[RMDB]
About this RNA: The record gives the reactivity of an RNA of 177 nucleotides to DMS and 2A3. The RNA was probed in 150 mM KOAc, 10 mM MgCl2 and 150 mM bicine (pH 8.5) at 24 C. The 2A3 profile rests on 5,363 reads. For DMS the reverse transcriptase was MarathonRT. It was measured as part of the RMDB library TTRDES.
RNA sequence: GGGAACGACUCGAGUAGAGUCGAAAAAGAUAUGGACACGUUACAAAGAGCGACGAUCUUAAAUCACAGUCCUUCGGAAACGAAGGAUCACAGUUUAAGGGAGCUCAAAAAGACGUGUCCUAAGUCAGCUAUACAUCACGUUCGCGUGAUGUAUAGCAAAAGAAACAACAACAACAAC
Reactivity to DMS in 0.01 (KOAc 150mM, MgCl2 10mM, bicine 150mM(pH8.5), 24C), signal-to-noise 3, nucleotides 027 to 126: a050g000a030u000a210u010g020g000a000c010a020c010g020u020u000a110c250a120a250a240g000a030g010c000g020a070c300g060a020u010c000u000u000a000a010a020u000c050a110c300a300g000u000c000c000u010u010c000g000g010a030a030a060c010g000a020a000g010g000a000u000c020a030c270a160g010u000u000u000a000a000g000g000g000a000g010c000u000c000a030a040a040a210a200g000a000c010g030u010g010u000c000c000u000a010a080g010u000c000a080
Reactivity to 2A3 in 0.01 (KOAc 150mM, MgCl2 10mM, bicine 150mM(pH8.5), 24C), signal-to-noise 2, nucleotides 027 to 126: a010g030a000u000a000u060g010g000a000c010a000c010g010u030u110a120c170a180a300a080g000a020g000c000g300a300c020g000a050u000c000u000u020a000a020a030u130c010a020c000a000g020u000c010c000u000u000c000g020g040a000a010a010c000g010a010a000g010g000a000u010c000a000c010a010g020u000u000u000a000a000g020g000g010a000g010c000u030c040a090a080a000a020a000g030a000c000g000u000g000u000c010c000u000a010a000g000u010c040a010